[RMDB]
RNA sequence: GGGAACGACUCGAGUAGAGUCGAAAAAGACGAUCAACCACCAGGUUUUUCGACUUAAGGGCAUGUAGAGCGCGGCAGGAAAAGAAUGCGCGAGGUUUCAUUUCUGCUUUGGCGGAUUGAUUGAACAGGUAGGCUAAUGAUUCGUCAUUAGCCUACCAAAAGAAACAACAACAACAAC
Reactivity to DMS in 0.01 (KOAc 150mM, MgCl2 10mM, bicine 150mM(pH8.5), 24C), signal-to-noise 2, nucleotides 027 to 126: a000g000a270c050g020a020u000c060a050a070c020c010a140c290c220a100g010g030u000u000u000u000u010c020g000a160c000u000u020a100a060g000g000g010c060a010u000g000u000a080g020a130g010c000g040c010g000g040c040a050g000g000a020a030a090a040g020a050a040u000g020c050g010c070g030a060g000g000u000u000u000c040a100u010u000u000c010u010g000c070u010u000u030g030g000c030g010g020a020u000u000g000a070u000u000g000a030a140c240a110
Background: The record gives the reactivity of an RNA of 177 nucleotides to DMS. The RNA was probed in 150 mM KOAc, 10 mM MgCl2 and 150 mM bicine (pH 8.5) at 24 C.